[RMDB]
The record gives the reactivity of an RNA of 207 nucleotides to 2A3.
The 2A3 profile rests on 829 reads.
Conditions: 150 mM KOAc, 10 mM MgCl2 and 150 mM bicine (pH 8.5), 24 C.

RNA sequence: GGGAACGACUCGAGUAGAGUCGAAAAGCGUACUACAAGUCGACGAUCAUUAGGUGGAGCGUCAACUAGCCAUAUCCCAAAUAGGAUAUGGCAUUGACGCGCUGACUAAUGGGAGACUUGUAUCGCAAAGUAGGACUUCGUUCGCGAAGUCCUACAAGAAGUGAUGGGUCUUCGGACCCAUCACUUCAAAAGAAACAACAACAACAAC
Reactivity to 2A3 in 0.01 (KOAc 150mM, MgCl2 10mM, bicine 150mM(pH8.5), 24C), signal-to-noise 1, nucleotides 027 to 156: g030c030g030u130a060c010u010a000c070a010a000g000u030c020g100a300c020g000a080u020c020a000u000u000a010g120g000u120g070g020a050g020c000g010u000c000a000a010c030u190a020g000c000c000a000u000a000u010c000c000c000a000a300a210u300a070g020g000a000u020a000u000g000g000c010a000u000u000g000a000c000g000c000g000c000u010g030a000c000u000a010a010u020g010g000g000a010g020a000c000u000u000g000u000a100u300c010g000c000a020a020a020g000u000a000g000g000a000c010u000u000c000g040u000u030c190g000c010g110a000a000g000u000c000c000u000a000c000a000a000